[RMDB]
RNA sequence: GGGAACGACUCGAGUAGAGUCGAAAAUGAAUCAUGCUCUUUUUAAGUGCUUUGAAACCCUCGAUGAAUGUGUCAAUGUGCAAAGAUAAACCAUUGUUCUCUGUUGAUCAGUGACUUAAUGUUUGCUUCAAUCAAUGAACUUCGGUUCAUUGAUUGAAAAAGAAACAACAACAACAAC
Reactivity to 2A3 in 0.01 (KOAc 150mM, MgCl2 10mM, bicine 150mM(pH8.5), 24C), signal-to-noise 1, nucleotides 027 to 126: u080g050a000a060u060c010a000u050g000c010u000c000u120u120u040u020u060a080a030g020u020g010c000u020u070u130g020a080a130a050c010c030c000u020c040g060a100u100g080a090a040u150g100u000g070u070c050a050a050u080g040u050g110c000a030a080a000g030a050u160a010a090a030c010c020a010u050u020g000u050u020c030u000c050u080g120u190u090g050a040u210c030a000g020u000g050a010c010u040u240a100a040u140g080u090u010u000g000c000u000
Reactivity to DMS in 0.01 (KOAc 150mM, MgCl2 10mM, bicine 150mM(pH8.5), 24C), signal-to-noise 2, nucleotides 027 to 126: u020g000a140a130u000c030a020u010g010c030u000c010u010u000u000u010u010a070a070g010u000g010c010u000u000u000g000a030a070a120c050c010c010u000c110g000a030u010g020a120a060u020g030u000g010u000c060a070a070u000g000u030g020c040a030a040a060g000a050u010a060a050a050c110c020a050u010u000g010u010u000c010u000c130u000g000u020u010g000a050u000c050a050g020u010g010a060c080u000u000a070a030u000g000u000u000u010g000c050u000